[RMDB]
RNA sequence: GGGAACGACUCGAGUAGAGUCGAAAAAAGAAAGCGGUCAAGAAUUUCACUGACGUCCACCCUGACUAUGGGGCCCGCAUCCAGGCUCUUCUGGACAAGUACAACGCUGAGAAGCCUAAGAACGCAAAAGAGAUCCUAUUUUCGAAUAGGAUCUCUUAAAAGAAACAACAACAACAAC
Reactivity to DMS in 0.01 (KOAc 150mM, MgCl2 10mM, bicine 150mM(pH8.5), 24C), signal-to-noise 3, nucleotides 027 to 126: a110a100g000a100a080a090g020c050g000g020u030c020a070a040g000a110a080u010u020u040c060a070c030u020g000a050c050g000u000c010c050a120c050c010c000u000g000a100c130u020a080u010g010g000g030g030c050c010c050g000c110a110u030c050c060a040g000g010c080u030c120u030u030c040u030g000g000a080c070a060a050g020u040a060c140a060a070c070g020c040u020g010a090g000a080a080g010c040c010u010a060a060g000a050a110c110g020c120a060a030
Reactivity to 2A3 in 0.01 (KOAc 150mM, MgCl2 10mM, bicine 150mM(pH8.5), 24C), signal-to-noise 3, nucleotides 027 to 126: a000a010g120a040a030a000g080c070g020g040u080c070a050a060g030a150a170u060u140u120c030a060c030u020g040a040c020g010u000c020c010a050c000c000c010u020g070a140c040u090a140u210g000g000g040g000c000c000c010g000c000a020u020c020c040a000g050g000c040u050c000u230u030c030u100g000g000a020c020a020a010g000u020a060c050a170a020c050g000c030u010g030a030g020a120a000g020c000c000u060a100a080g040a090a030c040g060c070a100a060
Source: RMDB library OK1LIB, as collected in RNAgym.
An RNA of 177 nucleotides, treated with DMS and 2A3 and read out base by base.
DMS adducts were read by reverse transcription with MarathonRT.
Reactivities are rounded to 0.1 and cut off at 0 and 3.
In probing experiments dimethyl sulfate is read out at A N1 and C N3, which are open when not base-paired.
For DMS, 3,275 sequencing reads were counted.